[RMDB]
RNA sequence: GGGAACGACUCGAGUAGAGUCGAAAAACAAUCUCGGGGUAAGUUCUGGGGGAAACGCGUAAUGACCAUUAAAGCUGGUGACAUUACGUAAGGUAGGUAUCAGUAAAACUUUACUGAUAGAAGGGAUAAUAGCUCCGGAAUUCGUUCCGGAGCUAUUAAAAGAAACAACAACAACAAC
Reactivity to DMS in 0.01 (KOAc 150mM, MgCl2 10mM, bicine 150mM(pH8.5), 24C), signal-to-noise 2, nucleotides 027 to 126: a090c070a060a140u000c070u080c040g020g000g000g000u000a130a170g000u000u000c020u010g000g040g010g010g000a100a130a090c220g000c010g000u000a000a000u000g000a070c000c020a000u050u000a150a090a100g020c300u000g000g000u000g020a140c000a000u000u000a000c050g000u000a090a120g000g000u010a010g000g020u000a000u000c000a000g000u010a020a010a140a230c270u080u000u000a000c000u000g000a050u000a000g000a100a190g020g020g000a150u020